[RMDB]
RNA sequence: GGGAACGACUCGAGUAGAGUCGAAAAGAUAUGGACGAUGCAUGACAUGCUGGAAACAUCGGAAACGAUGUUAUGCAGCAACAGCAUGCCAUCGUCCUAAGUCAAACUCGUAUCUUCGGAUACGAGAUCCUAAUGCACGGUUCGCCGUGCAUUAGGAAAAAGAAACAACAACAACAAC
Reactivity to 2A3 in 0.01 (KOAc 150mM, MgCl2 10mM, bicine 150mM(pH8.5), 24C), signal-to-noise 4, nucleotides 027 to 126: g010a020u050a040u110g000g010a000c000g020a010u010g030c000a000u010g060a240c050a170u300g020c010u020g050g160a040a030a000c010a020u000c000g010g000a030a030a020c010g020a020u000g020u020u030a240u300g120c010a000g030c020a080a080c030a070g110c000a000u000g020c110c010a010u000c010g000u000c000c000u000a000a000g020u010c000a050a050a120c000u010c010g000u010a000u000c010u000u080c300g170g000a000u010a000c010g000a000g010a000
Reactivity to DMS in 0.01 (KOAc 150mM, MgCl2 10mM, bicine 150mM(pH8.5), 24C), signal-to-noise 3, nucleotides 027 to 126: g000a050u000a300u000g000g000a010c010g020a000u000g000c020a000u000g010a010c070a210u010g010c020u000g000g010a030a020a030c000a000u010c000g020g000a130a060a190c000g020a000u010g000u000u000a030u000g000c010a040g000c000a040a100c300a120g030c000a010u000g000c200c120a010u000c010g000u000c000c000u000a000a030g000u010c030a130a130a210c000u000c000g020u000a010u000c000u020u020c210g040g000a030u000a000c000g000a010g010a050